[RMDB]
RNA sequence: GGGAACGACUCGAGUAGAGUCGAAAAAUUCUGGUCUGGCUACUGCCGCCAGUCGUGCAUCAUGAUUGAUGAUAUGUUUGCAGUGAAGGUUGAACCAUCAAUUGAAAGCCAGAUGAUCGAUGUGGUAUAGAAUUUUGUUUUUCGAAACAAAAUUCUAAAAAGAAACAACAACAACAAC
Reactivity to 2A3 in 0.01 (KOAc 150mM, MgCl2 10mM, bicine 150mM(pH8.5), 24C), signal-to-noise 1, nucleotides 027 to 126: a000u050u030c020u100g000g010u010c030u000g020g000c010u030a030c060u080g020c000c010g010c010c000a020g100u030c040g070u030g050c030a030u070c000a020u260g090a080u090u190g020a010u000g040a020u030a080u230g160u090u070u080g000c080a030g020u060g190a120a090g130g030u230u150g000a010a010c040c000a020u060c000a040a000u070u030g100a190a020a000g000c000c000a000g000a000u000g040a080u190c040g000a070u090g000u030g180g000u110a080
Reactivity to DMS in 0.01 (KOAc 150mM, MgCl2 10mM, bicine 150mM(pH8.5), 24C), signal-to-noise 4, nucleotides 027 to 126: a130u000u000c020u000g020g010u000c020u000g000g010c000u010a090c090u000g020c020c190g000c040c060a040g010u000c080g010u010g020c080a070u000c060a110u010g020a100u010u010g000a030u010g010a110u010a070u000g010u010u000u000g010c020a030g020u000g010a130a140g010g000u000u000g000a070a130c030c030a030u000c030a030a050u000u000g000a070a110a090g020c030c020a020g000a020u000g000a110u010c100g010a040u010g010u010g010g030u000a230

This 177-nucleotide RNA was probed chemically with 2A3 and DMS. The reactions ran in a buffer of 150 mM KOAc, 10 mM MgCl2 and 150 mM bicine (pH 8.5), at 24 C. The 2A3 profile rests on 957 reads. Values cover nucleotides 27 to 126.